RNA sequence: GGGAACGACUCGAGUAGAGUCGAAAAGAUAUGGAUCAUCAACGGUGAGUACAGACUAUUCGGAAACGAACGAAUCUGUACCUGAAUCCGUUAUGAUCCUAAGUCAAAAUCCCGGUUCGCCGGGAAACUCAUGAAAGUUGUUCGCAACUUUCAUGAGAAAAGAAACAACAACAACAAC
Reactivity to DMS in 0.01 (KOAc 150mM, MgCl2 10mM, bicine 150mM(pH8.5), 24C), signal-to-noise 3, nucleotides 027 to 126: g000a020u020a300u000g010g000a020u010c000a000u000c180a000a000c010g000g020u000g010a130g000u000a000c000a030g000a020c070u000a300u000u000c010g000g030a130a070a280c030g010a010a020c110g020a090a040u000c010u000g000u000a000c020c050u040g010a250a100u020c000c000g000u000u000a010u000g000a010u010c000c000u000a000a020g010u000c070a080a160a150a120u000c000c000c000g000g020u000u020c150g000c000c000g010g010g020a020a020a070
Reactivity to 2A3 in 0.01 (KOAc 150mM, MgCl2 10mM, bicine 150mM(pH8.5), 24C), signal-to-noise 2, nucleotides 027 to 126: g040a000u040a020u200g000g010a000u000c010a010u010c150a000a010c010g000g030u100g070a140g000u010a010c000a000g020a020c040u120a090u040u000c000g040g020a090a140a130c080g040a020a010c040g010a060a300u000c010u000g010u030a010c000c010u090g090a070a070u000c000c000g010u010u000a010u000g000a010u000c000c000u000a040a010g000u000c000a030a000a030a300u040c040c000c000g000g030u050u040c180g000c010c000g010g000g000a040a050a010
The record gives the reactivity of an RNA of 177 nucleotides to DMS and 2A3.
In probing experiments dimethyl sulfate is read out at A N1 and C N3, which are open when not base-paired.
For DMS, 1,867 sequencing reads were counted.
Values cover nucleotides 27 to 126.
Conditions: 150 mM KOAc, 10 mM MgCl2 and 150 mM bicine (pH 8.5), 24 C.
The data come from the RNA Mapping Database (RMDB), library TTRDEL.